[RMDB]
RNA sequence: GGGAACGACUCGAGUAGAGUCGAAAAGAUAUGGAGUAGUCGAGGAACUACGAGCGAUGAUCGGAAACGAUCACCGCUCGCCGAAGACAGCUACUCCUAAGUCAAAAGAGCCACUUCGGUGGCUCAACCUACAGAUAUCCUUCGGGAUAUCUGUAGGAAAAGAAACAACAACAACAAC
Reactivity to 2A3 in 0.01 (KOAc 150mM, MgCl2 10mM, bicine 150mM(pH8.5), 24C), signal-to-noise 3, nucleotides 027 to 126: g010a010u050a010u080g000g000a000g000u020a000g020u070c100g050a120g050g020a160a120c160u300a170c300g000a000g010c000g010a020u010g000a000u010c000g000g000a040a020a040c010g010a010u000c010a000c010c000g000c000u010c000g000c020c020g060a110a030g030a010c010a000g000c010u000a010c000u000c010c000u010a070a000g040u010c040a020a010a060a270g000a000g000c010c000a010c030u050u120c300g160g000u000g000g000c010u000c010a000a000
Reactivity to DMS in 0.01 (KOAc 150mM, MgCl2 10mM, bicine 150mM(pH8.5), 24C), signal-to-noise 3, nucleotides 027 to 126: g000a040u000a300u000g000g000a020g010u000a000g000u000c020g020a150g000g000a150a060c070u000a150c010g010a000g020c000g020a010u000g010a010u000c000g000g010a080a070a190c000g010a020u000c010a000c010c010g000c000u000c000g010c010c070g000a060a070g020a060c300a110g010c000u000a000c000u010c000c000u020a030a070g000u000c000a040a060a120a150g010a020g020c010c000a000c000u000u010c180g030g000u000g000g010c000u000c000a020a050